[RMDB]
RNA sequence: GGGAACGACUCGAGUAGAGUCGAAAAGAUAUGGAUUCGUCAUAUACAGCUUGGACCUCGGAAACGAGCUAGCUGUAUGCGAAUCCUAAGUCAAAGCUACUACCACUCUUCGGAGUGGUAGUAGCAACUACGCAAGUAGGUUCGCCUACUUGCGUAGAAAAGAAACAACAACAACAAC
Reactivity to 2A3 in 0.01 (KOAc 150mM, MgCl2 10mM, bicine 150mM(pH8.5), 24C), signal-to-noise 1, nucleotides 027 to 126: g020a010u080a020u150g000g000a000u010u010c010g050u050c050a010u030a000u010a300c020a000g030c010u100u150g070g180a300c000c050u000c030g050g000a080a120a060c000g020a030g000c010u000a010g000c000u010g000u020a000u030g010c000g010a000a000u000c000c000u010a070a000g020u000c020a120a000a060g000c010u000a000c010u010a020c050c000a000c000u040c020u100u150c300g120g000a000g010u000g000g000u020a020g020u000a000g000c060a010a000
Reactivity to DMS in 0.01 (KOAc 150mM, MgCl2 10mM, bicine 150mM(pH8.5), 24C), signal-to-noise 4, nucleotides 027 to 126: g000a030u000a300u000g000g010a000u000u000c010g020u040c300a120u010a110u000a020c000a000g010c000u000u010g030g000a100c300c020u000c000g000g000a090a110a160c010g000a000g010c010u000a000g000c000u000g000u000a000u000g000c020g000a010a010u000c000c000u000a020a070g000u000c030a090a110a160g000c000u000a000c000u000a000c000c000a010c000u000c000u000u010c170g020g010a030g010u000g000g000u000a000g000u010a000g010c000a010a030